Structure probing data (DMS and 2A3) for a 207-nucleotide construct. The 2A3 profile rests on 2,611 reads. It was measured as part of the RMDB library RNAMAK. Conditions: 150 mM KOAc, 10 mM MgCl2 and 150 mM bicine (pH 8.5), 24 C.

RNA sequence: GGGAACGACUCGAGUAGAGUCGAAAAUGCGAAUUCGUUCGCAAAAAAGAUAUGGAAAUGUACAGCGCCAGAGGAGGGCUUUCGGAAACGAAAGCCUACCCACCCUCUGGAACUACGCUGCGGCAUUUCCUAAGUCCUCGUGUUCAUUCGUGAACAAUUUGUACGAGAAAUUCGUUUCUCGUACAAAAAAAGAAACAACAACAACAAC
Reactivity to DMS in 0.01 (KOAc 150mM, MgCl2 10mM, bicine 150mM(pH8.5), 24C), signal-to-noise 2, nucleotides 027 to 156: u010g010c030g020a010a060u000u010c300g030u000u000c010g110c010a010a020a080a080a090a070g010a050u000a040u010g010g010a010a000a020u010g000u010a220c000a000g010c010g010c020c010a050g020a080g010g000a210g050g000g000c000u030u000u000c000g040g030a010a020a050c020g030a040a000a030g000c000c000u000a000c000c020c050a300c010c000c000u030c010u000g000g000a030a060c110u010a230c010g020c000u000g020c000g020g040c030a010u000u000u000c010c000u000a030a120g000u000c020c000u000c060g000u000g000u000u000c000a110u010u010c230g030u010g010a010a060c020a060a140
Reactivity to 2A3 in 0.01 (KOAc 150mM, MgCl2 10mM, bicine 150mM(pH8.5), 24C), signal-to-noise 2, nucleotides 027 to 156: u120g000c000g000a000a030u090u100c210g060u060u030c010g000c000a080a010a050a000a090a000g020a000u010a000u030g000g000a000a000a000u010g000u020a010c010a010g000c010g000c000c000a000g000a000g000g000a000g010g000g010c000u000u000u000c000g000g000a000a000a000c000g000a000a000a010g020c000c000u020a110c050c020c000a030c010c000c000u000c000u000g010g030a000a000c010u060a040c010g000c000u010g010c090g220g010c000a000u000u000u000c000c000u000a000a000g000u010c000c040u110c100g170u100g010u010u000c020a030u050u080c180g130u050g050a020a010c010a030a040